[RMDB]
RNA sequence: GGGAACGACUCGAGUAGAGUCGAAAAUACUACGCGGCCUCCCACCUCUCUGCCCGGAGGCGGCCGCCCGCCCAGAGACCCGGCCGGCUCCCACCGUCGCUUGGUCGACGACCCGCCGCGCCAACAACCAUUAGUCUCAAUUCGUUGAGACUAAUGGAAAAGAAACAACAACAACAAC
Reactivity to DMS in 0.01 (KOAc 150mM, MgCl2 10mM, bicine 150mM(pH8.5), 24C), signal-to-noise 3, nucleotides 027 to 126: u020a110c090u030a050c130g010c020g000g020c020c020u000c050c010c040a250c060c020u000c020u000c030u010g010c030c050c050g030g000a030g000g020c140g010g010c020c050g010c020c050c060g020c030c010c020a100g000a170g000a080c050c080c060g020g000c010c010g010g010c030u000c030c010c040a090c110c020g010u010c010g010c000u010u010g030g020u010c010g000a040c010g000a080c110c050c060g000c020c010g030c110g000c000c030a060a100c140a070a200

Overview
Structure probing data (DMS) for a 177-nucleotide construct. For DMS the reverse transcriptase was MarathonRT. The DMS profile rests on 2,079 reads. The RNA was probed in 150 mM KOAc, 10 mM MgCl2 and 150 mM bicine (pH 8.5) at 24 C.